Source: RMDB library ARCHII, as collected in RNAgym. Structure probing data (2A3) for a 207-nucleotide construct. For 2A3, 3,934 sequencing reads were counted. Conditions: 150 mM KOAc, 10 mM MgCl2 and 150 mM bicine (pH 8.5), 24 C.
RNA sequence: GGGAACGACUCGAGUAGAGUCGAAAAUGGCACUUCGGUGCCACAUACGCGUGGGUAGCCAAGCCAGGCCAACGGCGCAGCGUUGAGGGCGCUGUCCUGUAGAGGUCCGCCGGUUCAAAUCCGGUCCCACGCACCACUUCACUCGGUUCGCCGAGAACCCUGAUGAUGUUUUCGAACAUCAUCAGGGAAAAGAAACAACAACAACAAC
Reactivity to 2A3 in 0.01 (KOAc 150mM, MgCl2 10mM, bicine 150mM(pH8.5), 24C), signal-to-noise 4, nucleotides 027 to 156: u030g010g000c010a010c010u030u010c280g070g000u010g000c050c000a000c000a010u070a010c040g000c000g010u020g000g020g010u070a050g010c050c060a110a020g060c020c020a040g020g010c020c050a060a000c020g010g000c040g010c020a010g030c030g030u050u090g130a260g060g100g000c000g000c010u010g020u060c000c010u030g020u050a080g020a070g200g010u030c060c050g000c010c020g010g010u050u090c050a030a020a050u060c000c000g000g020u020c010c000c000a000c010g010c000a020c000c000a020c030u180u160c040a050c030u000c000g020g080u080u040c170g030c090c000g030a000g030a030a060